Chemical mapping of a 177-nucleotide RNA with 2A3 and DMS. High 2A3 reactivity points to a flexible backbone, as in loops and unpaired stretches. DMS adducts were read by reverse transcription with MarathonRT. It was measured as part of the RMDB library OK2TRN.
RNA sequence: GGGAACGACUCGAGUAGAGUCGAAAAGCUGUCGCGGUGAUCGCCACGUGGUAGGGAUGGUCGUCGCUCACCGCGCGGUGUAACGGUUGCGGAUCUCGUCGUUGCUCACGAAGCGCCCUGCGGCAACCUACCCUGUUGGUUUCGACCAACAGGGUAGAAAAGAAACAACAACAACAAC
Reactivity to 2A3 in 0.01 (KOAc 150mM, MgCl2 10mM, bicine 150mM(pH8.5), 24C), signal-to-noise 4, nucleotides 027 to 126: g000c020u060g170u270c010g000c030g040g000u010g010a050u100c030g040c030c000a050c030g080u110g010g130u100a120g090g080g030a090u100g090g080u090c050g020u040c020g020c030u020c000a010c000c000g040c020g000c020g010g010u050g020u020a070a030c040g000g040u020u130g060c010g040g060a110u020c050u020c040g060u020c010g040u040u050g070c040u070c030a060c040g070a090a020g030c020g040c010c000c030u060g010c040g020g000c020a020a030c000
Reactivity to DMS in 0.01 (KOAc 150mM, MgCl2 10mM, bicine 150mM(pH8.5), 24C), signal-to-noise 3, nucleotides 027 to 126: g010c010u000g020u010c020g020c030g010g020u000g000a010u000c030g050c030c040a050c040g030u010g020g020u010a070g000g010g010a100u000g020g000u010c130g000u020c050g020c110u000c040a030c010c010g040c030g020c040g010g010u010g000u020a090a080c070g020g000u010u000g010c040g030g010a130u010c050u000c030g020u000c040g000u000u010g010c020u000c040a090c100g010a120a080g000c060g000c040c040c020u000g000c030g020g010c060a040a050c060